Chemical mapping of a 177-nucleotide RNA with 2A3. The RNA was probed in 150 mM KOAc, 10 mM MgCl2 and 150 mM bicine (pH 8.5) at 24 C. Reactivities are given for positions 27 through 126.
[RMDB]
RNA sequence: GGGAACGACUCGAGUAGAGUCGAAAAACUCGCUACGGCGAGAAAGCUUAUCAAUGAUGUCCUAAAAAAUAAAUGUCUGAACAUAUGACUGCUAUAAUGAUUUCAGCAUUUAACUGAGAUAAGCUAAUGCCAUGCCUAGUUUCGACUAGGCAUGGCAAAAAGAAACAACAACAACAAC
Reactivity to 2A3 in 0.01 (KOAc 150mM, MgCl2 10mM, bicine 150mM(pH8.5), 24C), signal-to-noise 1, nucleotides 027 to 126: a000c000u040c000g000c000u040a050c150g080g030c000g000a000g010a090a000a000g000c000u000u000a000u000c010a070a170u070g090a180u240g060u100c000c060u070a060a080a080a080a000a000u090a000a000a000u000g300u250c070u000g000a000a000c000a000u060a020u160g120a170c090u300g000c070u300a020u120a120a150u020g150a040u030u010u010c000a000g000c060a000u000u000u000a020a090c020u040g000a000g000a090u000a000a000g000c000u060a080a080